[RMDB]
RNA sequence: GGGAACGACUCGAGUAGAGUCGAAAACGUCCGAUGCGGAAGUUCGUGCUUCCGUCGAACGCGAAAGUCGGACGGCGGCCAUGAGUCGCAACGCAAAGCCGCGGCAAGUGCAGUUAGCGAGAAGAGAAAAAGUCACGAGUGUUCGCACUCGUGACAAGCUAUACUACACGUUCGCGUGUAGUAUAGCAAAAGAAACAACAACAACAAC
Reactivity to 2A3 in 0.01 (KOAc 150mM, MgCl2 10mM, bicine 150mM(pH8.5), 24C), signal-to-noise 5, nucleotides 027 to 156: c010g010u000c000c000g000a000u040g010c010g020g030a010a000g010u130u300c130g130u300g080c020u010u010c020c000g010u010c010g040a130a050c030g010c040g130a110a040a000g030u010c010g000g000a000c000g010g000c010g020g000c010c020a160u250g020a040g080u030c010g000c030a040a030c030g010c060a080a050a030g010c040c040g020c020g040g010c060a110a050g060u040g050c040a040g020u080u070a040g040c030g040a020g040a150a030g060a040g050a010a070a040a050a020g000u000c000a010c000g000a000g000u000g050u050u070c150g050c080a000c000u000c000g000u000g000a000c000a010a000
Reactivity to DMS in 0.01 (KOAc 150mM, MgCl2 10mM, bicine 150mM(pH8.5), 24C), signal-to-noise 2, nucleotides 027 to 156: c000g000u010c010c000g020a030u010g000c010g040g000a030a060g030u000u000c200g000u000g000c000u000u000c010c010g040u000c040g000a090a080c040g030c020g000a140a080a120g060u000c010g040g000a060c040g020g020c040g020g000c030c060a190u010g010a280g020u000c010g020c010a060a040c020g030c060a050a130a210g070c020c020g020c010g010g010c030a070a110g020u010g000c040a120g000u010u020a170g010c100g010a110g000a110a070g000a200g020a060a030a100a110a260g000u010c010a020c010g000a070g030u000g010u000u000c270g020c000a020c000u000c010g030u000g000a000c010a000a050